[RMDB]
RNA sequence: GGGAACGACUCGAGUAGAGUCGAAAAUGCGGAUUCGUCCGCACUUGUGGGGUCGCAACGAUAAGAUACUUCAAUGAUGUACCUGAAGCCUCCACGGGUAUUGAGAAGUCUUUUGACGUUGCGACGGAGGCACCCCCGGCGCCAGUUUCGACUGGAAUAUACCAUCGGAUUUCGAUCCGAUGGUAUAAAAAGAAACAACAACAACAAC
Reactivity to 2A3 in 0.01 (KOAc 150mM, MgCl2 10mM, bicine 150mM(pH8.5), 24C), signal-to-noise 3, nucleotides 027 to 156: u040g000c000g010g000a000u030u080c270g080u010c050c000g070c020a010c040u120u150g050u170g060g070g040g040u000c000g000c010a000a000c010g040a080u070a200a100g030a110u180a190c010u030u040c030a070a300u130g060a050u160g040u030a000c000c000u010g000a100a010g010c000c010u040c010c000a000c010g000g000g000u000a030u030u140g050a080g010a010a000g020u040c060u080u290u120u190g070a030c020g010u000u000g000c000g000a000c000g000g030a010g010g000c000a040c010c000c000c000c000g090g040c100g030c000c020a020g000u030u110u200c150g090a020c020u010g000g080a040a020
Reactivity to DMS in 0.01 (KOAc 150mM, MgCl2 10mM, bicine 150mM(pH8.5), 24C), signal-to-noise 2, nucleotides 027 to 156: u000g030c030g010g000a020u000u010c300g000u010c000c000g030c000a000c000u000u000g000u000g010g000g020g030u010c010g020c000a010a010c020g020a160u040a150a040g030a140u010a060c020u000u000c000a090a220u000g000a150u020g010u000a020c000c000u010g010a030a120g020c030c010u000c010c040a290c010g010g020g050u030a010u000u010g010a110g000a020a040g000u000c110u000u000u020u040g010a190c070g010u000u000g000c000g000a020c020g000g000a080g090g030c050a200c010c000c030c010c030g010g050c080g000c000c010a020g020u000u000u000c170g040a040c010u000g010g010a140a280